Structure probing data (DMS and 2A3) for a 177-nucleotide construct.
RNA sequence: GGGAACGACUCGAGUAGAGUCGAAAAUGGAAUCCAGGAACAGUGACCAGGAUGCAAAUGGCAAACCCUCAUCAUGUUCUGCCAAAGUUUUACAGCCAGUCCACUCUGAAUUUUUUAUCCUAAUUGGGCUAUGUCUUUUAUUCGUAAAAGACAUAGCAAAAGAAACAACAACAACAAC
Reactivity to DMS in 0.01 (KOAc 150mM, MgCl2 10mM, bicine 150mM(pH8.5), 24C), signal-to-noise 7, nucleotides 027 to 126: u010g010g010a130a050u000c020c020a080g010g010a060a090c150a080g010u010g010a080c030c060a070g010g000a090u000g000c060a050a070a090u010g000g010c050a060a050a080c040c050c030u000c150a050u010c140a080u010g000u000u000c090u000g010c030c030a050a100a130g010u000u000u000u000a080c070a090g010c020c020a120g000u000c040c040a040c060u000c030u000g000a040a010u010u000u000u000u000u010a100u030c000c010u010a050a140u010u010g010g010
Reactivity to 2A3 in 0.01 (KOAc 150mM, MgCl2 10mM, bicine 150mM(pH8.5), 24C), signal-to-noise 5, nucleotides 027 to 126: u080g030g010a020a030u010c020c020a030g020g050a090a050c050a100g050u020g080a050c030c040a020g000g020a010u040g010c040a030a080a180u090g040g000c000a020a030a080c020c000c000u050c020a090u030c010a020u100g020u030u050c050u040g020c000c000a000a100a020g020u090u050u080u140a040c020a000g010c000c000a020g010u000c020c000a030c030u060c010u020g030a060a060u020u000u010u050u130u130a100u080c000c010u070a120a130u150u100g110g060
Notes: For DMS, 9,043 sequencing reads were counted. The data come from the RNA Mapping Database (RMDB), library OK2TRN. The reactions ran in a buffer of 150 mM KOAc, 10 mM MgCl2 and 150 mM bicine (pH 8.5), at 24 C.